[RMDB]
RNA sequence: GGGAACGACUCGAGUAGAGUCGAAAAUUUCCCUUCUCUCGUCUUCCUCGGUCAACCUCUUGAGUUCCUCUUCUUCCUCCCUGCUGAGCUUCUUUCCUCCCGCGUCCAACUGCUUCUUCUUGUUCUCGAGGGCCUUCCUUCGUCGGUGAUCCUGCCUCCUAACAAUUGACUUCGGUCAAUUGUUAGGAAAAGAAACAACAACAACAAC
Reactivity to 2A3 in 0.01 (KOAc 150mM, MgCl2 10mM, bicine 150mM(pH8.5), 24C), signal-to-noise 1, nucleotides 027 to 156: u050u040u010c000c000c000u070u030c050u020c020u000c000g040u020c000u070u010c040c010u030c030g060g000u060c010a080a100c020c030u010c010u060u000g060a070g030u020u030c030c000u030c060u150u000c030u090u000c000c020u010c020c010c000u010g010c030u020g020a040g050c030u060u090c000u020u060u060c020c010u030c010c020c010g030c010g000u020c020c030a020a010c050u040g070c000u000u040c000u030u010c020u020u080g140u160u010c050u030c020g000a070g020g040g070c030c000u130u120c010c000u110u100c060g090u020c040g000g010u030g050a020u020c000c010u020g000c060c020u020